[RMDB]
RNA sequence: GGGAACGACUCGAGUAGAGUCGAAAACACUCAACUGGUCGCGAGAUCAGCCGGUAAGCUGAGAGACCCACGCAGUCGGACUCUUCAGAUUAUCUCCUCAUCAGGCUAAUCACGGUUUUUGACCCGGACUAACCUACUGGUUCGCCAGUAGGUUAGUAAAAGAAACAACAACAACAAC
Reactivity to 2A3 in 0.01 (KOAc 150mM, MgCl2 10mM, bicine 150mM(pH8.5), 24C), signal-to-noise 8, nucleotides 027 to 126: c040a020c020u070c020a050a100c040u040g020g000u020c010g010c020g060a020g020a110u020c020a010g030c010c010g030g020u050a030a010g010c010u010g010a010g000a020g030a120c000c040c010a030c070g240c040a070g040u110c050g050g010a090c000u010c000u160u090c050a010g000a050u030u030a030u040c050u030c030c020u070c020a110u050c050a050g050g000c020u040a040a030u050c030a020c070g010g030u030u000u010u060u130g050a040c000c020c000g020g010
Reactivity to DMS in 0.01 (KOAc 150mM, MgCl2 10mM, bicine 150mM(pH8.5), 24C), signal-to-noise 5, nucleotides 027 to 126: c110a130c090u020c070a120a140c070u000g000g000u010c000g030c170g010a210g000a050u000c060a030g000c090c070g000g010u010a040a040g000c030u000g000a060g010a070g000a120c030c010c020a070c130g020c180a090g030u000c270g020g000a100c020u000c000u020u020c030a060g000a070u010u010a030u010c030u000c070c010u000c100a050u010c080a050g020g000c050u000a060a040u010c020a110c070g000g000u000u010u000u000u010g020a090c030c000c040g010g010